[RMDB]
RNA sequence: GGGAACGACUCGAGUAGAGUCGAAAAGUUAUGCUCUCGCUGCCCAAUGGCGGUGCGGGAAACCCACUCUAAAGUCCUUAGGGUUAGCCCCUUAAGGCGGGGUUCGGAGGCACCUGGCAACAGAAGCUGAAACUGUGCACAUUCGUGUGCACAGUAAGAUUAGAUAUUGUUUCGACAAUAUCUAAUCAAAAGAAACAACAACAACAAC
Reactivity to 2A3 in 0.01 (KOAc 150mM, MgCl2 10mM, bicine 150mM(pH8.5), 24C), signal-to-noise 8, nucleotides 027 to 156: g070u120u110a130u250g070c020u010c000u000c000g000c030u090g030c010c010c040a150a190u200g040g010c080g030g060u030g010c040g000g010g000a070a040a040c010c020c010a080c040u160c090u160a160a140a300g300u020c010c000u000u010a010g000g000g020u030u080a040g040c020c020c000c000u010u040a000a000g000g000c000g010g000g000g000u020u170c100g080g030a030g010g000c000a010c000c000u030g280g000c000a020a010c000a010g000a010a000g000c010u020g010a070a010a000c000u000g000u000g010c010a000c000a010u030u100c180g110u050g000u000g000c000a000c000a000g000u000a000a010
Reactivity to DMS in 0.01 (KOAc 150mM, MgCl2 10mM, bicine 150mM(pH8.5), 24C), signal-to-noise 3, nucleotides 027 to 156: g020u000u000a060u000g010c000u000c020u000c030g020c010u000g010c010c020c110a120a160u010g030g020c100g020g030u000g020c020g000g030g010a050a040a070c000c000c030a130c090u000c080u000a050a070a130g010u000c030c010u000u000a060g000g020g010u000u000a190g020c200c220c010c020u000u000a020a040g020g060c000g010g010g020g010u000u000c040g000g000a300g010g010c030a040c010c000u000g000g030c050a050a160c020a100g010a040a090g020c010u000g000a080a070a070c000u000g020u000g010c000a020c000a100u000u000c260g020u000g050u000g010c000a010c000a010g030u000a020a100
This 207-nucleotide RNA was probed chemically with 2A3 and DMS.
The RNA was probed in 150 mM KOAc, 10 mM MgCl2 and 150 mM bicine (pH 8.5) at 24 C.
2A3 is a SHAPE reagent: it acylates the 2'-hydroxyl of flexible nucleotides of all four kinds.
Source: RMDB library M2RFPK, as collected in RNAgym.
For DMS, 6,315 sequencing reads were counted.
Reactivities are given for positions 27 through 156.
The 2A3 profile rests on 8,452 reads.